[RMDB]
RNA sequence: GGGAACGACUCGAGUAGAGUCGAAAAUUUAAUGUGUCCGAAUCCACCAAGAAGGUCAUAUUGACCGAGUUCAAUCGCGGCAUGAACAUCACGGAUGAAAUCAUGCUCGGUCGCAUUCCGUGGGAGCCAUGCGUGAACGUUUCGACGUUCACGCAUGAAAAGAAACAACAACAACAAC
Reactivity to 2A3 in 0.01 (KOAc 150mM, MgCl2 10mM, bicine 150mM(pH8.5), 24C), signal-to-noise 2, nucleotides 027 to 126: u070u030u030a110a060u070g060u020g000u060c020c000g000a020a060u010c030c020a030c020c000a060a030g070a060a080g080g020u000c040a030u120a120u250u260g020a000c000c000g020a000g000u160u150c040a040a060u120c010g000c020g040g040c000a020u040g050a180a060c010a030u040c100a050c250g130g010a000u000g040a030a020a080u050c000a000u070g000c000u010c000g000g000u010c030g000c050a030u050u000c030c010g040u050g010g020g020a040g020c050
Reactivity to DMS in 0.01 (KOAc 150mM, MgCl2 10mM, bicine 150mM(pH8.5), 24C), signal-to-noise 2, nucleotides 027 to 126: u000u000u010a100a060u010g020u010g000u000c030c010g010a150a080u010c040c040a130c070c090a100a110g030a140a130g000g020u000c000a090u000a110u010u010g010a010c040c020g010a100g030u020u000c110a020a110u000c040g000c190g000g010c040a050u000g000a020a070c010a070u010c020a080c130g000g000a010u000g000a100a070a030u000c050a010u000g010c070u000c030g000g010u000c060g010c080a060u020u010c040c060g010u000g010g000g000a150g010c150
Chemical mapping of a 177-nucleotide RNA with 2A3 and DMS. The RNA was probed in 150 mM KOAc, 10 mM MgCl2 and 150 mM bicine (pH 8.5) at 24 C. Reactivities are given for positions 27 through 126. It was measured as part of the RMDB library OK2TRN. 2A3 is a SHAPE reagent: it acylates the 2'-hydroxyl of flexible nucleotides of all four kinds.